[RMDB]
RNA sequence: GGGAACGACUCGAGUAGAGUCGAAAAUAGCGGUGAAAUUUUAGGAGAUAAGGUUGCGGUUGGUGGCUUGGGUCUUGCCGCAGCUCGAAAAUGAAGGCCAAGAUAAGCGUGUAGAAAGCGUAUGGUUUCCUUGUGCGGACGAGGGUUCGACUCCCUCCAUCCACAGUAUCUUCGGAUACUGUGGAUGAAAAGAAACAACAACAACAAC
Reactivity to 2A3 in 0.01 (KOAc 150mM, MgCl2 10mM, bicine 150mM(pH8.5), 24C), signal-to-noise 4, nucleotides 027 to 156: u100a040g020c060g010g030u050g070a040a130a160u150u120u100u120a100g020g010a060g010a070u080a110a060g040g010u030u010g020c030g030g020u030u100g040g030u040g020g020c060u020u070g020g000g020u010c010u030u060g020c010c010g000c010a030g030c010u010c040g070a060a030a030a020u180g030a070a010g020g010c020c010a030a000g020a040u100a070a040g000c030g000u040g020u060a030g110a100a050a010g040c020g000u050a080u070g060g020u000u030u040c010c000u060u070g050u050g060c040g020g000a010c030g000a010g010g010g000u050u020c020g020a010c010u030c010c000c010u010c000
Reactivity to DMS in 0.01 (KOAc 150mM, MgCl2 10mM, bicine 150mM(pH8.5), 24C), signal-to-noise 1, nucleotides 027 to 156: u000a040g020c050g000g000u010g000a030a080a140u000u010u000u000a050g000g000a060g000a090u010a130a110g020g010u000u000g000c030g050g030u010u020g000g040u000g010g030c050u000u030g050g040g010u000c020u000u010g020c000c030g000c010a090g050c000u000c030g000a050a030a050a080u000g010a100a100g030g000c000c040a070a100g030a110u010a040a090g010c020g050u000g010u000a130g000a050a110a120g000c010g040u000a060u000g030g030u000u000u000c010c010u000u000g000u000g010c080g000g000a070c070g010a100g060g040g020u000u000c070g000a300c060u000c020c020c000u000c010